[RMDB]
RNA sequence: GGGAACGACUCGAGUAGAGUCGAAAAGAUAUGGAAGGACUCCCCACCAUACCGGAACAAUGAUGAUUAGGCUCUCGGAAACGAGAGCCUAAUUUGAGUUCCGUGGUAUGAGGUCCUUCCUAAGUCACAGAUGAACAGAGUUCGCUCUGUUCAUCUGAAAAGAAACAACAACAACAAC
Reactivity to DMS in 0.01 (KOAc 150mM, MgCl2 10mM, bicine 150mM(pH8.5), 24C), signal-to-noise 3, nucleotides 027 to 126: g000a030u000a080u000g000g000a010a000g000g000a010c000u010c080c020c000c050a300c110c000a010u000a000c000c000g000g000a030a010c020a050a070u000g030a060u010g010a000u000u010a000g000g020c000u000c010u000c000g000g000a040a040a050c010g010a020g010a010g030c000c000u000a000a000u000u010u000g010a300g010u000u000c010c000g000u020g000g010u000a000u000g000a090g020g010u000c000c000u000u010c000c000u010a000a030g000u000c060a280